Chemical mapping of a 207-nucleotide RNA with 2A3 and DMS. Values are in units of 0.01, from 0 to 300, in steps of 10. The 2A3 profile rests on 1,790 reads. DMS adducts were read by reverse transcription with MarathonRT. Reactivities are given for positions 27 through 156. The DMS profile rests on 3,713 reads. Source: RMDB library OK3TST, as collected in RNAgym. The reactions ran in a buffer of 150 mM KOAc, 10 mM MgCl2 and 150 mM bicine (pH 8.5), at 24 C.
RNA sequence: GGGAACGACUCGAGUAGAGUCGAAAAAAUGGUACUACCUCAAGGACAACGGCGCAAUGGCGACUGGUUGGGUGCUAGUCGGGUCAGAGUGGUAUUAUAUGGACGAUUCAGGCGCUAUGGUUACUGGUUGGGUCAAGUAUAAGAAUAACUGGUACUAUCUCUCUAAAUCAUUCGUGAUUUAGAGAGAAAAAGAAACAACAACAACAAC
Reactivity to 2A3 in 0.01 (KOAc 150mM, MgCl2 10mM, bicine 150mM(pH8.5), 24C), signal-to-noise 3, nucleotides 027 to 156: a000a000u130g020g000u070a070c080u100a070c040c010u050c060a040a060g040g020a010c010a060a040c110g050g010c010g000c100a090a090u090g000g050c020g040a060c010u040g050g030u020u060g040g030g000u050g000c000u010a020g010u010c010g000g020g080u020c040a010g010a050g070u070g020g020u040a030u100u080a090u050a030u090g050g020a040c070g020a030u050u030c060a020g020g000c020g000c080u040a020u120g000g030u030u030a050c010u050g000g050u080u070g050g000g010u020c020a050a020g040u060a080u060a180a040g040a050a030u130a070a030c020u090g010g000u010a030c010u030a030
Reactivity to DMS in 0.01 (KOAc 150mM, MgCl2 10mM, bicine 150mM(pH8.5), 24C), signal-to-noise 2, nucleotides 027 to 156: a020a060u010g030g030u010a050c040u000a090c040c020u010c040a100a130g010g030a100c040a050a090c050g000g040c040g030c030a100a150u010g000g000c000g010a060c080u000g020g020u010u010g040g000g040u000g000c030u020a060g030u000c060g020g000g010u010c020a100g010a120g030u000g030g030u000a040u000u000a080u010a130u010g000g010a120c090g000a160u000u010c060a060g010g020c040g010c090u010a040u000g030g010u000u000a070c040u000g020g040u000u000g020g030g030u010c070a040a080g000u000a100u000a040a110g020a080a080u010a060a070c040u010g010g020u000a090c040u000a170